The record gives the reactivity of an RNA of 177 nucleotides to 2A3 and DMS. For 2A3 the reverse transcriptase was SuperScript II with manganese. The reactions ran in a buffer of 150 mM KOAc, 10 mM MgCl2 and 150 mM bicine (pH 8.5), at 24 C. It was measured as part of the RMDB library M2PK50. 2A3 is a SHAPE reagent: it acylates the 2'-hydroxyl of flexible nucleotides of all four kinds.

RNA sequence: GGGAACGACUCGAGUAGAGUCGAAAAGACGGAUUCUUCGGAAUCCGUCAAAGUGACGGUGAAAAAUGGCCAAUGCGCCAGCUAGCACCGACACAGGGCGCAAAACUGGAGUGUUCGCACUCCAGAAGCUAGGAAAGUAGUUCGCUACUUUCCUAGCAAAAGAAACAACAACAACAAC
Reactivity to 2A3 in 0.01 (KOAc 150mM, MgCl2 10mM, bicine 150mM(pH8.5), 24C), signal-to-noise 4, nucleotides 027 to 126: g010a000c000g000g020a000u000u040c010u040u090c250g050g010a000a000u000c000c010g000u000c000a000a000a000g000u000g010a010c000g000g020u010g040a070a030a030a030a120u120g020g000c030c070a170a290u210g040c130g010c050c020a000g000c010u010a020g040c000a000c000c010g020a000c020a000c010a020g070g070g000c080g010c080a060a050a010a030c000u000g000g000a000g000u010g030u060u130c210g080c090a000c000u000c010c000a000g000a000a000
Reactivity to DMS in 0.01 (KOAc 150mM, MgCl2 10mM, bicine 150mM(pH8.5), 24C), signal-to-noise 4, nucleotides 027 to 126: g010a020c000g000g000a010u000u000c010u000u000c200g030g010a020a010u000c000c010g010u000c000a010a020a050g010u000g010a130c020g000g020u000g000a020a040a040a090a240u010g020g000c000c010a150a150u000g000c160g030c000c000a080g000c170u000a090g000c010a010c010c020g010a100c020a020c020a130g020g000g000c060g010c100a080a060a120a170c010u000g000g000a020g010u000g000u010u020c220g030c010a010c010u000c000c000a000g000a030a050